RNA sequence: GGGAACGACUCGAGUAGAGUCGAAAACGGUCGAAAUUCGUUUCGACCGAAUAUGCUAGCUGAGCACAGCUGCAAUGCUAAGGUGAAAGCCAGCUGCAAGCGCGAGUUCGGCGUUCGCGCCGAACAACUCAAACGGGAUAUUCGUAUCCCGUUUGAGAAAAGAAACAACAACAACAAC
Reactivity to DMS in 0.01 (KOAc 150mM, MgCl2 10mM, bicine 150mM(pH8.5), 24C), signal-to-noise 3, nucleotides 027 to 126: c010g040g040u000c000g010a020a020a030u010u020c210g010u000u000u000c000g000a000c000c000g010a050a000u000a070u010g030c030u000a030g020c040u000g010a240g030c040a060c080a090g010c000u000g000c130a080a060u010g010c060u000a100a070g020g010u000g000a080a130a070g020c010c010a040g020c030u010g010c080a080a070g000c080g030c160g010a150g000u010u000c020g000g010c030g030u000u020c140g000c010g010c020c020g000a020a010c010a060a110
Reactivity to 2A3 in 0.01 (KOAc 150mM, MgCl2 10mM, bicine 150mM(pH8.5), 24C), signal-to-noise 2, nucleotides 027 to 126: c010g000g010u000c000g000a010a020a030u170u100c190g040u020u000u010c000g000a010c010c000g000a000a020u080a030u030g000c090u090a050g000c010u010g050a020g040c030a030c020a200g010c000u060g000c100a090a060u180g030c040u120a110a110g170g000u070g070a080a010a010g020c000c000a000g000c030u010g000c040a070a050g060c050g000c040g070a080g070u000u010c000g010g000c010g030u020u030c230g000c000g000c000c000g000a000a000c010a010a010
Chemical mapping of a 177-nucleotide RNA with DMS and 2A3. Reactivities are given for positions 27 through 126. The RNA was probed in 150 mM KOAc, 10 mM MgCl2 and 150 mM bicine (pH 8.5) at 24 C. Source: RMDB library M2PK50, as collected in RNAgym.